[RMDB]
RNA sequence: GGGAACGACUCGAGUAGAGUCGAAAACACCUGACCAGUAUUGUUGGCUGGUGCAAUCCAGUGGUGAGCCGACAGUGAGCCCCAGCUUUUAGGAAACAGGGCUGUCCUACAUGUGGAUGGCUCUGUGCGCCAGCAUGGAAUUCGUUCCAUGCUGGCGAAAAGAAACAACAACAACAAC
Reactivity to 2A3 in 0.01 (KOAc 150mM, MgCl2 10mM, bicine 150mM(pH8.5), 24C), signal-to-noise 3, nucleotides 027 to 126: c060a050c000c010u000g020a020c000c010a020g020u020a110u200u010g040u050u010g020g010c000u000g000g040u010g050c020a000a090u050c060c050a030g080u030g040g020u050g030a040g020c000c000g050a030c030a050g030u020g090a030g040c000c000c020c000a010g030c040u060u000u010u080a120g010g000a080a140a000c000a000g000g000g020c010u010g000u000c000c010u090a160c080a290u300g050u090g080g000a010u020g010g000c000u000c000u000g000u000g000
Reactivity to DMS in 0.01 (KOAc 150mM, MgCl2 10mM, bicine 150mM(pH8.5), 24C), signal-to-noise 2, nucleotides 027 to 126: c220a140c030c020u020g010a080c030c000a050g000u020a060u000u030g000u020u000g000g000c010u000g000g020u000g010c030a140a140u030c020c040a010g030u000g040g010u000g000a130g030c040c000g030a080c140a060g010u010g000a230g000c060c000c000c020a190g000c040u050u000u040u010a120g040g030a100a120a040c000a010g000g010g000c000u020g000u000c000c000u020a070c300a120u080g040u020g020g030a010u000g000g020c020u000c000u000g010u030g000

The data come from the RNA Mapping Database (RMDB), libraries RFM100 and RFMREP. An RNA of 177 nucleotides, treated with 2A3 and DMS and read out base by base. As a SHAPE reagent, 2A3 marks flexible, mostly unpaired nucleotides at the ribose 2'-OH.